[RMDB]
The data come from the RNA Mapping Database (RMDB), library OK2TRN. An RNA of 177 nucleotides, treated with 2A3 and DMS and read out base by base. Reactivities are rounded to 0.1 and cut off at 0 and 3. The 2A3 profile rests on 831 reads.

RNA sequence: GGGAACGACUCGAGUAGAGUCGAAAACUUCUGUCGGAGGACUGCUGCGAGUUCUGCCAGAGAGAGCAGCUCUUGUCCCGGAACAUGAGGUAGGUGGUGGGGCUUGGGGACACGCGGCUGGACUGGCAAGUAUAGCAUCCUUCGGGAUGCUAUACUUAAAAGAAACAACAACAACAAC
Reactivity to 2A3 in 0.01 (KOAc 150mM, MgCl2 10mM, bicine 150mM(pH8.5), 24C), signal-to-noise 1, nucleotides 027 to 126: c000u060u000c000u060g050u080c050g080g130a110g130g000a010c030u060g000c030u020g000c090g080a080g150u160u000c010u090g120c070c040a050g020a010g020a000g020a010g040c050a010g030c020u000c080u210u150g000u030c010c020c000g050g040a190a040c040a130u280g030a040g000g000u090a050g000g070u100g060g050u240g030g000g010g020c060u080u140g050g000g020g000a020c020a020c140g030c050g050g100c030u000g070g020a050c000u000g020g040c030
Reactivity to DMS in 0.01 (KOAc 150mM, MgCl2 10mM, bicine 150mM(pH8.5), 24C), signal-to-noise 1, nucleotides 027 to 126: c080u000u010c050u000g000u000c060g000g020a170g000g010a050c020u000g000c030u000g010c040g020a130g020u010u020c050u000g030c060c070a080g000a130g020a130g030a300g010c000a030g020c020u010c120u000u010g000u010c020c010c010g000g020a080a050c060a040u010g010a030g030g040u010a030g000g010u010g000g040u010g000g000g000g000c140u010u000g010g000g000g000a080c060a030c110g010c050g010g030c050u010g000g040a090c030u000g010g040c130
2A3 adducts were read by reverse transcription with SuperScript II with manganese. The reactions ran in a buffer of 150 mM KOAc, 10 mM MgCl2 and 150 mM bicine (pH 8.5), at 24 C.